[RMDB]
RNA sequence: GGGAACGACUCGAGUAGAGUCGAAAAUGCCAAAGUUAAGGACACAUGUCUGUGACACAGCCUCAGGAGGUCCUGACAACAUGUGCCCAAGGUGGCGAUUGAGGUACAGCUUGGUUUUAUACAUUUCAAGGAGACAUGAGACAUCAAUCAAUAUAUAGACGGUGGUAUAUUUCGAUAUACCACCGUCAAAAGAAACAACAACAACAAC
Reactivity to DMS in 0.01 (KOAc 150mM, MgCl2 10mM, bicine 150mM(pH8.5), 24C), signal-to-noise 2, nucleotides 027 to 156: u000g000c010c010a030a030a220g010u010u010a120a210g030g000a020c040a000c030a030u000g030u000c040u000g000u010g000a130c160a190c070a140g000c010c010u000c000a140g060g000a080g070g030u020c000c010u000g010a130c040a000a070c060a000u010g010u000g010c010c010c020a030a170g040g030u000g020g040c080g000a050u000u000g000a100g020g060u000a070c090a090g000c030u000u000g030g030u000u000u010u000a170u000a120c020a090u000u010u000c040a050a110g020g010a070g010a080c040a150u010g010a140g010a210c070a080u010c010a020a060u000c020a060a070u000a130u000a130u000a180
Reactivity to 2A3 in 0.01 (KOAc 150mM, MgCl2 10mM, bicine 150mM(pH8.5), 24C), signal-to-noise 3, nucleotides 027 to 156: u110g020c000c010a040a010a050g100u190u200a050a100g000g010a010c010a000c000a000u090g010u070c060u050g050u110g070a020c040a010c010a140g090c030c010u110c080a120g000g200a070g070g060u040c000c030u010g030a030c020a050a000c000a040u050g010u020g000c000c000c030a020a020g120g010u070g010g040c010g030a000u020u100g020a010g010g010u070a020c020a060g010c020u040u040g080g000u050u060u030u070a120u010a030c080a070u060u060u190c050a030a020g030g010a050g030a050c060a100u120g020a070g080a040c050a020u110c000a000a050u030c010a040a060u140a040u120a000u070a270